[RMDB]
RNA sequence: GGGAACGACUCGAGUAGAGUCGAAAAGAUAUGGAUCGGCCCAUACUGGAGCUCCGGUCGGAAACGACGGGAGCGUUGAAAGUAUACCCUCACCGAUCCUAAGUCAAAAUCCCACUUCGGUGGGAAAGAUAAGUACUAAGUUCGCUUAGUACUUAUCAAAAGAAACAACAACAACAAC
Reactivity to DMS in 0.01 (KOAc 150mM, MgCl2 10mM, bicine 150mM(pH8.5), 24C), signal-to-noise 8, nucleotides 027 to 126: g010a040u000a240u010g010g000a010u000c000g010g010c250c130c090a080u000a010c010u000g000g010a100g010c000u000c000c000g010g030u000c000g010g010a110a090a170c010g020a020c010g010g010g010a010g010c010g000u000u010g000a150a090a040g000u000a020u000a180c080c060c060u000c100a290c020c000g000a010u000c000c000u000a020a070g000u010c090a060a100a110a150u000c000c000c000a010c010u000u010c150g010g010u000g010g000g000a010a030a040
Reactivity to 2A3 in 0.01 (KOAc 150mM, MgCl2 10mM, bicine 150mM(pH8.5), 24C), signal-to-noise 4, nucleotides 027 to 126: g020a040u180a080u260g000g000a000u010c000g000g030c050c020c010a010u030a020c020u030g020g070a020g010c010u000c040c050g200g000u010c020g000g010a070a070a030c020g010a000c090g150g010g000a000g020c000g000u050u030g000a010a010a000g010u010a030u070a060c050c010c030u090c060a030c010c010g000a000u000c010c000u030a100a000g040u010c030a030a010a010a280u030c000c030c000a010c000u070u090c300g070g000u000g000g000g000a010a010a000